[RMDB]
RNA sequence: GGGAACGACUCGAGUAGAGUCGAAAAAAUGGAUAUCAAUUAGCUAGACCGAUUCCAAGACAGUUGACGAAUCGAUGGUUGUCGAGCUUUGUGAGUCAAAUUAUGUCUGACGGCGUCAACGAGACUACGAUAGGGAUGGUUUCGACCAUCCCUAUCGAAAAGAAACAACAACAACAAC
Reactivity to DMS in 0.01 (KOAc 150mM, MgCl2 10mM, bicine 150mM(pH8.5), 24C), signal-to-noise 3, nucleotides 027 to 126: a070a070u010g000g000a060u010a040u000c050a090a100u000u010a100g020c150u000a100g000a110c050c040g000a100u000u000c020c040a130a070g000a090c150a070g020u000u000g000a060c040g000a090a060u000c020g000a050u000g010g030u010u020g020u010c040g020a030g010c140u000u020u000g010u000g000a090g030u000c020a030a070a100u000u010a050u000g000u000c040u010g000a060c050g000g000c010g000u000c040a020a010c030g010a140g010a120c070u010a150
Reactivity to 2A3 in 0.01 (KOAc 150mM, MgCl2 10mM, bicine 150mM(pH8.5), 24C), signal-to-noise 1, nucleotides 027 to 126: a000a000u170g040g000a060u110a030u160c050a050a080u190u030a070g030c040u030a030g030a080c060c000g010a000u080u000c000c000a000a010g080a040c080a080g000u000u010g040a020c010g030a090a020u060c020g020a000u060g120g100u290u140g010u010c030g060a010g090c000u070u110u110g050u050g020a000g000u020c000a000a000a120u280u120a080u160g030u000c020u000g000a000c000g010g010c040g010u000c030a020a000c020g020a040g040a040c060u060a040
Structure probing data (DMS and 2A3) for a 177-nucleotide construct.
Values cover nucleotides 27 to 126.
For DMS the reverse transcriptase was MarathonRT.
2A3 adducts were read by reverse transcription with SuperScript II with manganese.
It was measured as part of the RMDB library OK2TRN.